About this RNA
Source: RMDB library M2PK50, as collected in RNAgym. Structure probing data (2A3 and DMS) for a 177-nucleotide construct. The reactions ran in a buffer of 150 mM KOAc, 10 mM MgCl2 and 150 mM bicine (pH 8.5), at 24 C. For DMS, 2,872 sequencing reads were counted. The 2A3 profile rests on 5,601 reads.
[RMDB]
RNA sequence: GGGAACGACUCGAGUAGAGUCGAAAAGUUUCAUCCUUCGGGAUGAAACAAAUAAAGUCACGCUCGCGCGUCACUGGCAUCGAGUAGGUCGAGCCGCCUACAAAAUCGACGGGUUCGCCCGUCGAAACCUAACUUAACGGUUCGCCGUUAAGUUAGGAAAAGAAACAACAACAACAAC
Reactivity to 2A3 in 0.01 (KOAc 150mM, MgCl2 10mM, bicine 150mM(pH8.5), 24C), signal-to-noise 3, nucleotides 027 to 126: g000u000u000u000c000a010u000c000c000u020u060c240g110g000g000a000u000g000a010a000a000c000a000a010a000u160a010a080a010g040u020c010a000c040g000c010u050c050g080c010g000c000g030u020c020a020c060u040g050g000c030a130u060c110g010a040g050u050a020g040g080u020c070g030a030g050c040c000g010c000c010u020a030c010a010a060a000a150u030c000g000a000c000g000g010g020u040u060c180g070c020c000c010g000u000c000g000a000a000a000
Reactivity to DMS in 0.01 (KOAc 150mM, MgCl2 10mM, bicine 150mM(pH8.5), 24C), signal-to-noise 3, nucleotides 027 to 126: g000u000u000u000c000a020u000c000c000u000u020c200g020g010g000a000u000g000a010a000a000c000a030a050a070u000a080a050a070g010u000c150a050c040g010c010u000c250g000c260g000c010g020u010c120a010c010u000g020g020c130a130u000c100g000a120g010u010a020g000g010u000c030g000a130g010c040c040g000c010c000u000a050c050a070a040a110a100u000c010g000a020c000g020g010g010u000u010c220g010c000c000c020g000u000c000g000a000a030a080